[RMDB]
RNA sequence: GGGAACGACUCGAGUAGAGUCGAAAAUUAAAGGAGUGAAGGUACAAGCGACAGUGUCCAACUGAGGUAAUCGACCACUGCCAGUACCAACACGUGCGUAGUCAACUCAAAGGCAGAACGCAAAAAAACAAACUAAUCUCUUCGGAGAUUAGUUUGUAAAAGAAACAACAACAACAAC
Reactivity to DMS in 0.01 (KOAc 150mM, MgCl2 10mM, bicine 150mM(pH8.5), 24C), signal-to-noise 2, nucleotides 027 to 126: u000u020a090a090a110g000g000a180g020u000g010a030a290g020g000u000a000c000a130a120g020c050g030a040c000a000g010u000g020u000c070c180a090a050c150u030g050a030g020g000u010a070a090u010c080g000a060c240c050a030c030u000g010c010c010a080g020u000a050c030c000a010a300c030a010c030g030u010g000c010g020u000a130g000u010c040a040a090c020u000c040a060a070a120g010g010c010a080g030a130a050c020g020c020a000a000a030a040a080a020
Reactivity to 2A3 in 0.01 (KOAc 150mM, MgCl2 10mM, bicine 150mM(pH8.5), 24C), signal-to-noise 1, nucleotides 027 to 126: u130u050a090a050a040g070g050a140g030u040g010a040a030g000g000u020a010c040a020a170g050c050g280a110c000a010g010u000g040u050c060c040a050a040c100u160g030a060g160g070u110a060a070u140c050g060a060c040c020a000c030u000g000c000c010a020g000u000a010c000c000a000a000c010a000c010g000u020g010c030g000u060a050g030u020c010a100a170c030u030c100a040a030a000g000g080c000a000g020a150a000c000g000c000a010a040a080a000a020a020
Conditions: 150 mM KOAc, 10 mM MgCl2 and 150 mM bicine (pH 8.5), 24 C. An RNA of 177 nucleotides, treated with DMS and 2A3 and read out base by base. Values cover nucleotides 27 to 126. For DMS, 1,214 sequencing reads were counted. High 2A3 reactivity points to a flexible backbone, as in loops and unpaired stretches. Values are in units of 0.01, from 0 to 300, in steps of 10.